[RMDB]
The record gives the reactivity of an RNA of 177 nucleotides to 2A3.
RNA sequence: GGGAACGACUCGAGUAGAGUCGAAAAGAAGAGAAUACGGUGUAAGAACAGCCCAACUUACACCGUGCGGCAUAACGGAAACACUGAUGUCGAAACUUGGGCUGAUCGUGAAUGAACGAAAGAAGAAGGCCUACCACUAUUUCGAUAGUGGUAGGCCAAAAGAAACAACAACAACAAC
Reactivity to 2A3 in 0.01 (KOAc 150mM, MgCl2 10mM, bicine 150mM(pH8.5), 24C), signal-to-noise 1, nucleotides 027 to 126: g300a100a010g140a000g100a060a080u110a140c000g000g000u000g020u000a000a000g010a080a000c010a030g000c000c000c000a000a000c000u030u000a000c000a000c000c000g030u040g000c030g050g020c040a030u070a240a000c070g140g000a000a100a000c160a000c140u040g120a080u050g000u050c030g080a120a050a050c090u030u060g000g040g000c010u010g000a160u000c010g030u000g130a050a290u130g030a020a030c010g030a050a000a030g100a040a060g100a040a000
The reactions ran in a buffer of 150 mM KOAc, 10 mM MgCl2 and 150 mM bicine (pH 8.5), at 24 C.